[RMDB]
RNA sequence: GGGAACGACUCGAGUAGAGUCGAAAACUAGGCUAGCUGUCUGAUCCAUGCGAUCACGAUCCUCUACUAGGUACGUACCUAUGACGGUACUCAUGACAUGCAGCUAGCAUGCGCGAUCGUCUGUCGGUCCAUUUCAAUCGUUCGCGAUUGAAAUGGAAAAAGAAACAACAACAACAAC
Reactivity to DMS in 0.01 (KOAc 150mM, MgCl2 10mM, bicine 150mM(pH8.5), 24C), signal-to-noise 4, nucleotides 027 to 126: c050u010a090g000g010c000u000a010g030c010u000g010u000c120u000g000a070u010c070c030a070u000g000c130g010a080u010c140a090c140g010a080u010c050c040u000c130u010a130c160u000a040g020g000u000a100c250g000u020a070c000c010u000a090u010g020a080c130g000g000u010a040c050u000c030a060u000g020a110c070a030u000g000c010a030g000c030u000a030g010c000a030u000g010c080g010c060g000a060u000c060g000u010c060u010g010u000c030g020g000
Reactivity to 2A3 in 0.01 (KOAc 150mM, MgCl2 10mM, bicine 150mM(pH8.5), 24C), signal-to-noise 4, nucleotides 027 to 126: c020u030a040g070g100c000u000a010g000c000u040g030u070c020u030g040a070u070c070c020a090u100g030c070g050a060u070c070a010c190g080a110u060c020c030u060c020u080a140c040u050a060g030g060u050a050c100g070u040a010c030c000u070a160u270g100a040c110g030g010u030a030c010u020c030a060u060g020a050c000a030u040g000c000a000g020c000u000a010g000c000a020u090g010c090g000c030g030a050u090c020g080u010c070u100g140u050c010g060g000
Chemical mapping of a 177-nucleotide RNA with DMS and 2A3. The 2A3 profile rests on 4,477 reads. Reactivities are given for positions 27 through 126.